[RMDB]
RNA sequence: GGGAACGACUCGAGUAGAGUCGAAAAGGUAACAACACUCGAAAAAACUGAGUUUAUGUGUGUACUUGACGGCGAUCAGAGCAACGAUCUAGCACCAUAUAAAUUCAGUGUUUUCGUGGCUCAUGAGGAUGAUAAGUGAGUUCGCUCACUUAUCAUCAAAAGAAACAACAACAACAAC
Reactivity to 2A3 in 0.01 (KOAc 150mM, MgCl2 10mM, bicine 150mM(pH8.5), 24C), signal-to-noise 4, nucleotides 027 to 126: g040g030u060a100a010c050a000a030c010a050c020u020c010g000a000a000a000a000a010a010c020u010g000a000g000u010u010u000a010u000g020u000g030u030g000u000a020c000u010u030g000a010c010g010g040c030g060a140u190c120a100g050a040g160c030a150a170c040g020a060u010c010u010a000g000c000a000c020c020a000u000a000u010a030a010a000u010u000c000a000g000u000g020u000u010u000u010c010g010u010g030g000c020u040c080a080u130g080a030g210
Reactivity to DMS in 0.01 (KOAc 150mM, MgCl2 10mM, bicine 150mM(pH8.5), 24C), signal-to-noise 4, nucleotides 027 to 126: g040g010u010a090a080c100a080a080c100a090c010u000c000g000a000a010a020a060a030a030c010u000g000a030g010u000u000u000a010u010g020u010g010u020g030u000a040c010u000u000g000a040c010g010g010c130g010a160u010c210a130g010a160g010c030a060a120c040g000a150u000c010u000a010g000c030a010c000c010a010u000a020u000a010a000a010u000u000c010a000g020u000g020u000u000u000u000c000g020u000g000g010c060u010c050a070u010g010a160g020

Chemical mapping of a 177-nucleotide RNA with 2A3 and DMS. The DMS profile rests on 5,280 reads. The data come from the RNA Mapping Database (RMDB), library RFMREP. The reactions ran in a buffer of 150 mM KOAc, 10 mM MgCl2 and 150 mM bicine (pH 8.5), at 24 C.